[RMDB]
RNA sequence: GGGAACGACUCGAGUAGAGUCGAAAAGAAUGCAUCUAAGCUCGAAACCCACCUGGAAAAGAAGCACCACUGAGACCGCUCGUAGAAGACGAGUUCGAUAGACUUGGGGUGUACGCGUCGAGGCAACUCUCUAAUAAGCAUUCGUGCUUAUUAGAGAAAAAGAAACAACAACAACAAC
Reactivity to DMS in 0.01 (KOAc 150mM, MgCl2 10mM, bicine 150mM(pH8.5), 24C), signal-to-noise 8, nucleotides 027 to 126: g010a110a060u020g010c040a070u020c070u020a090a150g020c010u010c050g000a080a130a110c030c010c010a140c040c040u020g000g000a070a040a070a080g000a110a130g010c030a040c020c010a110c020u010g010a060g010a090c070c060g000c020u000c010g000u010a130g030a100a130g000a060c010g010a020g000u010u010c070g010a110u020a070g000a080c020u000u000g000g000g000g010u010g000u010a040c130g010c080g000u000c020g010a050g000g000c090a070a090c140
Reactivity to 2A3 in 0.01 (KOAc 150mM, MgCl2 10mM, bicine 150mM(pH8.5), 24C), signal-to-noise 9, nucleotides 027 to 126: g050a050a030u130g010c010a020u020c060u150a080a060g030c010u020c040g090a140a100a110c010c000c010a030c000c030u060g080g040a060a060a030a050g090a130a030g010c010a000c010c000a150c050u030g010a010g020a050c000c020g010c010u000c000g030u040a070g050a300a010g130a060c010g010a000g010u070u180c050g050a100u080a120g080a050c010u010u020g000g010g010g010u020g010u050a050c070g010c020g040u040c020g020a020g020g010c000a010a060c010